[RMDB]
Structure probing data (2A3 and DMS) for a 177-nucleotide construct. The data come from the RNA Mapping Database (RMDB), library M2PK90. For DMS the reverse transcriptase was MarathonRT. The 2A3 profile rests on 3,244 reads. The reactions ran in a buffer of 150 mM KOAc, 10 mM MgCl2 and 150 mM bicine (pH 8.5), at 24 C.
RNA sequence: GGGAACGACUCGAGUAGAGUCGAAAAGUAAAGGCGGAGGAGGGUUUUGGCUUGCGCUCGGUCCGCCCGCGCGUGGUGUGCGCUGGAAUUCGUGUGUGGAGGAUGAUUAAUGCCGCGCGCCCAGGAACAAGUUAAAUCGUUUCGACGAUUUAACUUGAAAAGAAACAACAACAACAAC
Reactivity to 2A3 in 0.01 (KOAc 150mM, MgCl2 10mM, bicine 150mM(pH8.5), 24C), signal-to-noise 3, nucleotides 027 to 126: g020u030a070a080a090g020g000c040g000g000a010g050g050a030g030g090g020u050u050u130u140g170g020c070u060u100g000c140g030c030u010c020g020g190u000c000c000g010c000c000c000g000c010g000c000g010u020g010g030u040g000u030g000c040g000c020u060g020g110a080a060u060u080c060g010u090g030u060g050u140g190g040a030g030g000a040u070g010a000u090u220a100a040u080g020c000c010g000c000g000c000g000c020c000c000a040g020g010a060a050
Reactivity to DMS in 0.01 (KOAc 150mM, MgCl2 10mM, bicine 150mM(pH8.5), 24C), signal-to-noise 4, nucleotides 027 to 126: g010u000a080a100a110g010g020c020g000g010a040g010g020a080g010g000g010u000u000u000u000g010g000c100u010u000g020c050g020c000u010c020g010g010u010c030c030g000c010c010c030g020c060g010c020g000u000g010g010u010g020u000g000c120g000c050u000g000g020a180a120u000u010c030g000u010g020u000g020u010g010g010a140g010g000a100u000g010a130u000u010a080a050u000g010c020c000g000c030g010c040g020c000c040c030a100g000g010a090a200